[RMDB]
RNA sequence: GGGAACGACUCGAGUAGAGUCGAAAAUGAGACACCUUCGGGUGUCUCACAUUAAGCUGACCAGCUAUGAGGUCAAUAUCGUCAUGCACAAAUAGAAAAAAACAGCUUGCUCCUUCGGGAGCAAGAAUAAAUGUCCAACAUUCGUGUUGGACAUUUAAAAAGAAACAACAACAACAAC
Reactivity to 2A3 in 0.01 (KOAc 150mM, MgCl2 10mM, bicine 150mM(pH8.5), 24C), signal-to-noise 2, nucleotides 027 to 126: u040g000a010g010a000c010a020c020c040u030u030c190g040g000g010u000g000u000c000u010c000a000c000a000u040u040a080a010g020c020u000g000a020c010c030a000g000c030u140a060u170g050a040g000g000u020c060a050a060u110a110u110c040g020u000c050a040u130g010c070a000c030a100a110a050u210a140g180a050a110a020a010a000a010a000c010a000g040c000u010u010g000c000u000c000c020u020u080c170g070g010g010a000g010c010a000a010g010a000a000
Reactivity to DMS in 0.01 (KOAc 150mM, MgCl2 10mM, bicine 150mM(pH8.5), 24C), signal-to-noise 3, nucleotides 027 to 126: u000g000a010g010a030c000a000c000c000u000u020c220g040g010g040u000g000u000c000u000c000a020c070a050u010u000a110a100g000c080u000g010a060c030c030a130g010c020u020a060u000g010a080g010g020u000c020a080a110u010a060u010c130g010u000c060a040u010g010c040a080c150a060a080a090u010a070g010a000a010a050a080a040a090a130c140a060g000c010u000u000g000c000u000c000c000u000u010c230g030g010g010a010g010c000a010a000g010a070a070